RNA sequence: GGGAACGACUCGAGUAGAGUCGAAAAUGCUCUCGCCGUGGUACGGCCGCGUAUCCGCUGUUGGGAUCUGGCAUCUAUCAGGUGCCUGUUGGACCUAGUUUUGAUGCGUGGGAGCGUAACCACCGUCCCACUCAGUCACGUUCGCGUGACUGAGUGGAAAAGAAACAACAACAACAAC
Reactivity to DMS in 0.01 (KOAc 150mM, MgCl2 10mM, bicine 150mM(pH8.5), 24C), signal-to-noise 2, nucleotides 027 to 126: u000g010c050u000c010u010c130g010c100c100g050u010g020g010u010a120c040g010g030c020c080g030c000g030u000a020u000c020c300g030c020u010g000u000u030g000g010g010a280u000c040u020g010g000c000a010u000c000u000a140u020c250a100g010g010u000g000c010c010u010g000u010u010g000g010a250c000c010u000a010g010u000u010u010u000g010a020u010g020c070g020u010g020g040g010a110g020c010g000u010a050a070c040c000a060c050c090g000u020c060
Reactivity to 2A3 in 0.01 (KOAc 150mM, MgCl2 10mM, bicine 150mM(pH8.5), 24C), signal-to-noise 2, nucleotides 027 to 126: u130g010c020u000c020u030c060g050c110c030g020u010g000g100u090a020c010g080g060c000c000g070c000g010u030a000u030c050c030g030c060u100g130u210u110g080g030g020a080u010c030u000g000g020c000a010u000c040u120a300u190c140a060g000g000u000g030c000c030u030g050u080u080g050g070a030c010c000u010a040g010u040u090u140u270g000a000u000g000c010g000u040g060g080g000a070g140c010g000u010a010a080c010c050a060c020c040g130u120c010
Chemical mapping of a 177-nucleotide RNA with DMS and 2A3.
For DMS, 1,574 sequencing reads were counted.
It was measured as part of the RMDB library OK2TST.
DMS adducts were read by reverse transcription with MarathonRT.